Source: RMDB library M2RFPK, as collected in RNAgym.
This 207-nucleotide RNA was probed chemically with 2A3 and DMS.
Reactivities are given for positions 27 through 156.

[RMDB]
RNA sequence: GGGAACGACUCGAGUAGAGUCGAAAACAAUCAACAAUAUGGUUUGUGUAGUUAUGCUGAAAAUCGUUGAGGUUGUAUGGCAUAGGUUAACCGUAAGACCUUAAGUUGAAAAACUUUAAAAUUAAUCAAAAUCAUGUACACUUCGGUGUACAUGAAAGAUAUUGUAGAACUUCGGUUCUACAAUAUCAAAAGAAACAACAACAACAAC
Reactivity to 2A3 in 0.01 (KOAc 150mM, MgCl2 10mM, bicine 150mM(pH8.5), 24C), signal-to-noise 5, nucleotides 027 to 156: c040a020a090u090c020a010a050c020a070a100u100a080u180g020g060u040u080u070g130u030g020u040a120g070u080u020a020u030g010c020u030g060a080a040a020a040u060c040g020u070u180g090a070g040g000u030u010g010u030a080u120g040g000c020a020u010a020g020g000u100u080a040a030c030c020g050u080a080a070g020a020c000c000u010u040a040a010g000u010u000g010a110a020a000a020a030c040u180u240u230a040a100a070a120u160u200a100a080u110c030a060a110a020a100u050c000a000u000g010u000a000c000a000c020u030u070c210g060g000u000g010u000a000c000a000u000g000a000a000a000
Reactivity to DMS in 0.01 (KOAc 150mM, MgCl2 10mM, bicine 150mM(pH8.5), 24C), signal-to-noise 2, nucleotides 027 to 156: c020a010a120u000c010a030a080c010a110a090u010a180u010g000g020u010u000u000g050u000g030u010a090g010u000u000a050u000g030c020u020g000a150a110a030a100u010c030g000u010u000g020a160g000g010u000u000g000u010a080u000g010g020c000a090u000a060g070g030u000u000a060a110c000c030g040u010a060a120g000a050c060c000u000u000a020a150g010u000u010g000a100a020a160a110a070c050u010u000u000a040a050a020a240u020u000a140a240u000c010a070a060a100a130u000c000a010u000g000u000a000c000a000c000u000u000c300g040g020u010g020u000a000c000a000u000g000a010a040a040

The reactions ran in a buffer of 150 mM KOAc, 10 mM MgCl2 and 150 mM bicine (pH 8.5), at 24 C. For DMS, 2,872 sequencing reads were counted. For DMS the reverse transcriptase was MarathonRT.